[RMDB]
RNA sequence: GGGAACGACUCGAGUAGAGUCGAAAACUUUCAUCGUGGUGUUGGUACGUUGAGAAGUCGUCUUGCAUGAGGCGGCGCCGUGCUUGCCGGGCUUUGCAUCCCUAGCCGGUCGAAGGGGCCGCUGGGGCCUGCUCUUCAAGUUCGCUUGAAGAGCAGGAAAAGAAACAACAACAACAAC
Reactivity to 2A3 in 0.01 (KOAc 150mM, MgCl2 10mM, bicine 150mM(pH8.5), 24C), signal-to-noise 2, nucleotides 027 to 126: c000u050u110u090c070a090u060c050g070u030g050g020u040g030u100u060g030g060u050a020c040g020u010u060g060a060g030a190a070g050u060c020g030u010c020u070u010g110c110a110u300g080a010g030g020c000g000g010c000g000c000c000g000u030g000c030u050u080g010c030c030g030g000g000c000u040u040u090g020c010a080u040c010c000c000u000a000g080c170c060g010g010u030c000g090a210a110g140g050g000g000c000c000g050c000u000g000g000g020g000
Reactivity to DMS in 0.01 (KOAc 150mM, MgCl2 10mM, bicine 150mM(pH8.5), 24C), signal-to-noise 2, nucleotides 027 to 126: c030u000u060u010c060a090u050c030g030u010g030g000u000g000u010u000g000g000u010a020c110g010u030u000g010a080g020a050a110g030u010c000g000u020c020u010u010g000c160a070u030g010a070g000g010c000g000g000c000g000c050c090g020u000g000c020u000u000g020c020c020g010g010g020c110u000u020u000g000c170a100u020c020c000c000u000a020g040c160c060g010g000u000c050g010a250a090g040g040g000g020c010c000g000c000u020g010g000g010g000